Chemical mapping of a 177-nucleotide RNA with 2A3 and DMS. Values cover nucleotides 27 to 126. The data come from the RNA Mapping Database (RMDB), libraries RFM100 and RFMREP. The reactions ran in a buffer of 150 mM KOAc, 10 mM MgCl2 and 150 mM bicine (pH 8.5), at 24 C.

[RMDB]
RNA sequence: GGGAACGACUCGAGUAGAGUCGAAAAUAGUGGCAUCAGUUACUGCUGUAAACCCGUAGAGUUCAGGAGAUUGGGGUCGGUGGCGGCGAGCAUGGCUGUGACAAAAUUGGAUGCCGCCUUGGUUCCGAUCAGUAGCAAUGUUCGCAUUGCUACUGAUAAAAGAAACAACAACAACAAC
Reactivity to 2A3 in 0.01 (KOAc 150mM, MgCl2 10mM, bicine 150mM(pH8.5), 24C), signal-to-noise 7, nucleotides 027 to 126: u160a020g040u030g010g010c010a040u030c030a060g030u070u100a040c020u040g020c000u030g020u100a060a110a120c000c000c020g010u060a060g020a040g040u060u100c070a060g020g060a080g040a110u080u100g030g000g040g000u040c030g040g030u050g050g010c010g000g000c030g010a030g050c020a040u070g040g000c020u030g040u060g060a040c040a010a140a040a110u140u080g060g010a010u080g010c010c000g010c000c010u010u070g050g000u030u010c000c010g000
Reactivity to DMS in 0.01 (KOAc 150mM, MgCl2 10mM, bicine 150mM(pH8.5), 24C), signal-to-noise 6, nucleotides 027 to 126: u010a040g020u010g000g010c020a070u010c090a090g010u010u010a080c040u010g010c010u000g000u020a070a120a150c030c010c020g020u020a110g000a100g010u010u000c050a070g010g010a090g000a070u010u000g010g010g000g000u010c040g000g010u030g000g020c030g010g000c010g010a080g010c090a050u000g000g000c030u010g020u000g010a100c130a040a040a070a140u010u020g000g010a070u000g010c010c010g010c030c030u000u010g000g010u000u000c010c020g010